[RMDB]
RNA sequence: GGGAACGACUCGAGUAGAGUCGAAAACUCAUUGCUGUGGUCACCUGCACUCUGGCUGCCUACCUUAACUACACAUUAGAAUCACCUGAGGAGCUUUUAAAGCCACAAUGCAAGACUCCACCCUAGGCCAAUUGGAUCCAAAUCCCUGGGGUAGGGCACGGAAUUAACGUUUCGACGUUAAUUCCGUAAAAGAAACAACAACAACAAC
Reactivity to 2A3 in 0.01 (KOAc 150mM, MgCl2 10mM, bicine 150mM(pH8.5), 24C), signal-to-noise 1, nucleotides 027 to 156: c040u080c020a080u070u150g000c050u040g030u030g020g040u020c030a000c060c060u120g000c010a050c040u010c010u040g000g060c130u070g000c030c060u120a160c040c010u200u120a100a090c100u270a070c110a000c000a120u130u300a050g050a110a050u170c060a020c020c000u010g040a010g020g020a180g150c010u160u210u040u230a130a190a000g000c000c010a060c040a080a120u150g040c010a000a090g010a210c070u030c000c000a010c010c010c000u040a020g020g050c040c050a000a160u030u070g070g000a100u160c030c000a070a130a000u000c020c070c000u000g000g000g000g000u020a160g040g020g000c050
Structure probing data (2A3) for a 207-nucleotide construct. The data come from the RNA Mapping Database (RMDB), library OK3TST. The reactions ran in a buffer of 150 mM KOAc, 10 mM MgCl2 and 150 mM bicine (pH 8.5), at 24 C. For 2A3 the reverse transcriptase was SuperScript II with manganese.